The data come from the RNA Mapping Database (RMDB), library OK2TST.
This 177-nucleotide RNA was probed chemically with 2A3 and DMS.
DMS adducts were read by reverse transcription with MarathonRT.
2A3 adducts were read by reverse transcription with SuperScript II with manganese.
RNA sequence: GGGAACGACUCGAGUAGAGUCGAAAAGAGCAGCAACGCCAAUUGACAUUGAGAAAGUACCAAAACAGUGUGAAGCAUCUGUUGUCACACAUGAAGGAAAAGCACUUUUUGGGGGUCUGCGUGAUUAUCCCCUUUCCUAAUUCGUUAGGAAAGGGGAAAAAGAAACAACAACAACAAC
Reactivity to 2A3 in 0.01 (KOAc 150mM, MgCl2 10mM, bicine 150mM(pH8.5), 24C), signal-to-noise 2, nucleotides 027 to 126: g060a010g000c010a000g010c040a030a050c030g010c030c000a020a030u080u150g100a070c070a060u050u120g030a050g030a080a060a060g060u090a040c030c010a000a060a020a000c040a050g010u020g000u000g060a030a010g040c020a100u110c100u260g170u090u110g150u030c020a000c000a000c000a040u060g050a010a060g040g020a060a040a030a000g050c020a020c030u020u030u010u060u020g010g000g000g040g020u000c010u000g000c010g080u040g060a020u130u200a040
Reactivity to DMS in 0.01 (KOAc 150mM, MgCl2 10mM, bicine 150mM(pH8.5), 24C), signal-to-noise 4, nucleotides 027 to 126: g030a150g020c020a030g010c070a120a050c080g020c010c070a040a060u000u010g020a100c140a060u000u000g000a150g000a030a050a060g020u010a150c010c000a010a050a070a080c070a040g010u000g010u000g000a060a050g000c030a130u020c130u010g020u000u010g000u010c060a030c070a010c020a060u000g010a080a090g000g000a040a030a090a180g010c050a030c030u010u000u000u010u010g020g010g000g010g010u000c030u010g000c040g010u000g020a070u010u000a140